Structure probing data (2A3 and DMS) for a 177-nucleotide construct. Conditions: 150 mM KOAc, 10 mM MgCl2 and 150 mM bicine (pH 8.5), 24 C. For DMS, 1,790 sequencing reads were counted.
RNA sequence: GGGAACGACUCGAGUAGAGUCGAAAACACCGAGUUUGCCUCUAAUUCCUCGGUGUUGUCACUUGUUAACUUCACCGUUGAUCCUCAAAAAGCUUAUCUCGAUUUCGUCAAUGCGGGAGGUGCCCCACAUUGCUCUGAUGUUCGCAUCAGAGCAAUGAAAAGAAACAACAACAACAAC
Reactivity to 2A3 in 0.01 (KOAc 150mM, MgCl2 10mM, bicine 150mM(pH8.5), 24C), signal-to-noise 2, nucleotides 027 to 126: c010a000c000c010g000a000g020u010u080u110g060c040c030u100c030u090a110a100u130u100c030c010u000c000g010g000u000g000u010u010g010u010c030a040c020u060u070g060u140u070a070a030c010u050u030c020a010c080c000g020u010u040g010a040u080c010c020u100c060a100a090a030a000a010g010c050u080u070a060u070c030u020c040g100a090u000u170u040c040g050u020c050a110a070u070g050c000g000g000g010a020g000g010u010g010c000c000c010c010a020
Reactivity to DMS in 0.01 (KOAc 150mM, MgCl2 10mM, bicine 150mM(pH8.5), 24C), signal-to-noise 2, nucleotides 027 to 126: c030a010c000c000g000a020g010u010u000u010g010c080c050u000c070u000a100a130u010u010c150c010u020c000g010g010u000g010u000u010g010u010c080a080c130u020u010g000u010u010a040a080c080u000u000c090a090c090c030g020u000u000g000a050u010c020c020u050c110a040a050a060a100a060g010c080u000u000a100u000c020u000c030g010a170u020u010u000c100g000u010c070a040a070u010g010c040g010g010g020a050g000g000u000g010c020c000c010c080a190